The record gives the reactivity of an RNA of 177 nucleotides to 2A3 and DMS. Values cover nucleotides 27 to 126.
RNA sequence: GGGAACGACUCGAGUAGAGUCGAAAAACAUCACGUACUUACGUACAGAUGAAGGCUGGCUGUAUCUGGCAGUGGUCAUUGACCUGUGGUCACGUGCCGUUAUUGGCUGGUCAAUGUCGCCACGCAAACGUACUGAUUAGUUCGCUAAUCAGUACGUAAAAGAAACAACAACAACAAC
Reactivity to 2A3 in 0.01 (KOAc 150mM, MgCl2 10mM, bicine 150mM(pH8.5), 24C), signal-to-noise 9, nucleotides 027 to 126: a000c030a020u050c050a020c200g020u030a020c030u280u210a060c140g010u010a010c020a020g030a030u030g050a070a070g030g010c020u020g020g000c010u020g020u060a080u070c070u140g040g000c020a030g010u010g000g010u020c010a020u030u100g150a160c020c060u090g020u030g050g020u030c020a020c110g130u130g020c010c000g000u010u020a050u110u180g050g000c010u010g000g000u000c000a010a030u050g010u030c050g050c080c000a060c030g040c050a120a110
Reactivity to DMS in 0.01 (KOAc 150mM, MgCl2 10mM, bicine 150mM(pH8.5), 24C), signal-to-noise 9, nucleotides 027 to 126: a120c030a030u000c010a120c200g020u000a010c020u000u010a130c290g010u000a020c010a100g010a020u000g000a100a100g010g010c010u000g010g000c030u000g010u000a030u000c040u020g040g010c020a120g020u000g000g000u000c010a020u000u000g010a050c190c110u000g020u000g010g000u000c050a030c080g010u000g020c010c010g010u000u000a050u010u010g030g010c010u000g010g000u000c010a050a040u000g010u000c110g000c020c010a080c150g010c160a070a090
It was measured as part of the RMDB library OK2TRN. For DMS the reverse transcriptase was MarathonRT. Values are in units of 0.01, from 0 to 300, in steps of 10.